Structure probing data (2A3 and DMS) for a 207-nucleotide construct. Values are in units of 0.01, from 0 to 300, in steps of 10. It was measured as part of the RMDB library M2RFPK.

[RMDB]
RNA sequence: GGGAACGACUCGAGUAGAGUCGAAAAGAAAUUCCCGAUCGGCGGUAAAGUCCGCAAGCCGAACGAAAAAGGUUUGGCAGGAACCGGUGAGAUUCCGGUACCGACAGUAUAGUCUGGAUGGAAGAAGGUAGCCUCCUCUCGUUCGCGAGAGGAGGAACUCAUCAUUAAACUUCGGUUUAAUGAUGAGAAAAGAAACAACAACAACAAC
Reactivity to 2A3 in 0.01 (KOAc 150mM, MgCl2 10mM, bicine 150mM(pH8.5), 24C), signal-to-noise 1, nucleotides 027 to 156: g020a010a080a000u030u000c010c000c000g000a210u110c000g010g020c010g030g000u000a000a000a000g000u000c000c020g000c000a000a000g010c010c000g000a000a000c000g050a140a000a140a030a070g070g000u010u000u000g010g010c010a000g020g000a010a000c000c000g020g000u000g000a030g000a000u000u000c000c010g020g020u000a000c000c000g010a000c000a000g030u030a030u110a220g080u020c050u080g110g020a010u060g050g040a060a100g000a100a040g150g000u090a050g020c000c000u000c000c000u000c000u000c000g040u050u080c260g000c030g100a000g000a010g010g010a000g000g000a000a000
Reactivity to DMS in 0.01 (KOAc 150mM, MgCl2 10mM, bicine 150mM(pH8.5), 24C), signal-to-noise 2, nucleotides 027 to 156: g010a040a170a170u000u000c010c000c000g000a050u000c020g040g060c020g030g000u010a090a240a060g030u010c000c020g060c010a300a300g010c040c020g030a020a260c020g020a090a190a230a210a240g030g000u010u000u000g030g050c030a120g000g000a080a010c000c010g000g000u040g000a300g000a300u000u000c020c000g000g010u000a010c000c010g010a060c100a090g000u000a130u000a120g010u000c040u000g010g040a100u000g000g020a090a070g000a110a080g010g020u010a090g000c010c010u000c020c000u000c000u010c020g040u000u010c220g000c020g000a020g010a050g050g030a000g010g000a000a020